[RMDB]
RNA sequence: GGGAACGACUCGAGUAGAGUCGAAAAUUGUACACCUUCGGGUGUACAAGCUCUCUAGUCGCUAGCAAACGAUCAAAGCUAGCGACUAGACUUUAUUGAUCGCGACGUGCGCUUUCGAGCGCACGAACGGUUAUUUUUGGUUCGCCAAAAAUAACCGAAAAGAAACAACAACAACAAC
Reactivity to DMS in 0.01 (KOAc 150mM, MgCl2 10mM, bicine 150mM(pH8.5), 24C), signal-to-noise 1, nucleotides 027 to 126: u010u000g000u000a000c000a010c000c000u000u000c120g050g010g030u000g020u020a000c000a020a050g000c050u020c010u000c000u000a010g010u000c020g020c000u000a000g020c000a070a140a150c070g000a030u010c050a090a100a140g000c000u000a000g000c000g010a020c010u000a010g000a010c200u010u010u030a070u000u000g000a000u000c020g010c270g020a180c020g020u000g010c000g020c000u010u000u010c160g020a030g010c000g000c000a000c000g010a070a080
Reactivity to 2A3 in 0.01 (KOAc 150mM, MgCl2 10mM, bicine 150mM(pH8.5), 24C), signal-to-noise 1, nucleotides 027 to 126: u000u000g000u000a000c000a010c020c010u020u070c270g140g000g000u000g010u000a010c000a020a020g000c000u010c000u000c010u000a000g000u000c030g000c000u000a000g010c030a090a050a090c050g060a060u070c030a080a080a000g000c000u000a000g040c000g000a010c000u000a000g000a000c000u050u050u070a090u060u120g020a010u080c020g020c030g140a090c020g030u000g000c010g000c030u090u060u070c250g050a000g010c010g000c020a000c000g000a000a010